Structure probing data (2A3) for a 207-nucleotide construct.
[RMDB]
RNA sequence: GGGAACGACUCGAGUAGAGUCGAAAACAGAUAGCUUCGGCUAUCUGCAUAGUCCUAAGUCCUGUGGGAGCAUUUACCUAUGAAGUCGUCGGAAACGACGAUGGAGGUAAAGCAUCGAUCACAGGAUAUGGAAAUAACGUUGUCUUCGGACAACGAAGAGUCGUUAUUCCUUCGGGAAUAACGACUCAAAAGAAACAACAACAACAAC
Reactivity to 2A3 in 0.01 (KOAc 150mM, MgCl2 10mM, bicine 150mM(pH8.5), 24C), signal-to-noise 1, nucleotides 027 to 156: c020a000g000a010u000a000g000c000u030u060c290g150g000c000u010a000u000c000u000g000c010a030u220a040g170u060c000c000u020a130a020g000u020c010c000u000g000u000g020g080g030a120g010c070a080u000u000u000a010c010c000u150a300u300g010a030a000g000u000c000g000u000c020g000g050a070a100a110c000g000a000c000g000a000u020g000g020a000g000g000u000a000a000a020g000c030a220u100c030g170a120u150c010a000c000a000g000g000a010u010a010u000g010g100a080a120a060u190a150a040c020g000u000u000g000u020c030u000u010c180g110g000a000c020a000a000c010g000a040a020
Reactivities are given for positions 27 through 156.
The RNA was probed in 150 mM KOAc, 10 mM MgCl2 and 150 mM bicine (pH 8.5) at 24 C.